Overview: Source: RMDB library OK2TRN, as collected in RNAgym. Chemical mapping of a 177-nucleotide RNA with 2A3 and DMS.
[RMDB]
RNA sequence: GGGAACGACUCGAGUAGAGUCGAAAAGUAGCAUCUAAUUAUCUCAUUGAGUCUCAUGCCAACGAUCAUUUCCUAAUUGUCGGAGGUGCAAUUUGGUAUGAGAGUCGUUGGGAUGACUCAAUGCUGAGCAGUGGAGAGUAUUCGUACUCUCCACUGCAAAAGAAACAACAACAACAAC
Reactivity to 2A3 in 0.01 (KOAc 150mM, MgCl2 10mM, bicine 150mM(pH8.5), 24C), signal-to-noise 2, nucleotides 027 to 126: g070u040a020g010c030a050u070c060u140a140a060u180u130a080u050c020u000c030a030u020u040g000a010g070u020c000u000c070a020u070g000c000c010a000a010c030g030a040u090c010a030u080u080u070c000c000u070a070a060u100u040g070u090c060g190g120a160g070g080u150g030c000a010a010u000u000u040g000g010u000a000u030g030a060g000a000g030u010c000g000u010u000g000g000g020a000u000g000a000c010u000c030a010a000u010g000c030u060g050a020
Reactivity to DMS in 0.01 (KOAc 150mM, MgCl2 10mM, bicine 150mM(pH8.5), 24C), signal-to-noise 2, nucleotides 027 to 126: g000u000a050g010c100a070u010c090u000a120a130u020u020a090u010c020u020c000a020u000u000g000a010g010u010c080u000c060a020u000g000c010c000a010a000c060g010a150u000c020a080u000u000u000c020c000u000a020a050u000u000g040u010c230g020g010a080g010g020u010g020c030a020a050u000u000u010g000g010u000a010u000g010a110g000a090g010u000c000g000u020u000g000g000g000a000u000g000a010c010u000c020a030a000u000g040c100u000g000a090
The 2A3 profile rests on 2,761 reads. The DMS profile rests on 1,782 reads. The RNA was probed in 150 mM KOAc, 10 mM MgCl2 and 150 mM bicine (pH 8.5) at 24 C.